[RMDB]
RNA sequence: GGGAACGACUCGAGUAGAGUCGAAAAGACUUGGGAUUUCAGAAAUCCCUCACCAUCUGAGAUCCGGUGGUUUUAACUACAAUGUAACAAAACUGUUUAUUACACACAUUCGGUUGCUAUGGAAAUAGCCAUAUUUCUCCUAAUCAACUGAGUAUCAGGCAUCCUAAUAUUUCGAUAUUAGGAUGCCAAAAGAAACAACAACAACAAC
Reactivity to 2A3 in 0.01 (KOAc 150mM, MgCl2 10mM, bicine 150mM(pH8.5), 24C), signal-to-noise 4, nucleotides 027 to 156: g040a010c120u100u080g030g010g000a000u020u050u070c050a040g080a050a140a050u050c010c020c010u010c020a040c040c010a030u020c010u020g040a060g010a100u040c020c020g030g010u040g030g000u050u050u050u160a080a050c040u110a040c070a110a150u170g050u210a180a030c030a070a090a040a040c060u030g050u080u130u040a140u090u190a100c100a020c020a020c020a140u050u030c020g020g000u000u000g030c020u040a000u160g000g020a010a030a050u010a030g090c070c020a060u040a050u100u030u070c100u030c020c020u060a090a090u110c000a000a000c010u000g010a000g060u030a110u150c060a020
Reactivity to DMS in 0.01 (KOAc 150mM, MgCl2 10mM, bicine 150mM(pH8.5), 24C), signal-to-noise 2, nucleotides 027 to 156: g020a040c100u000u000g030g030g000a040u010u030u020c100a140g000a060a220a150u010c040c000c010u020c040a080c060c010a080u000c010u010g010a080g010a020u000c060c050g000g110u000g020g030u000u000u000u000a060a160c030u010a120c120a070a070u000g010u000a030a150c060a010a070a120a280c140u010g000u000u000u000a100u020u010a030c070a060c100a140c090a160u010u010c000g030g010u010u000g010c090u010a150u000g000g000a030a030a050u010a150g060c110c190a070u010a130u010u010u010c020u030c040c020u030a150a110u010c050a020a080c000u010g000a060g000u000a060u010c060a160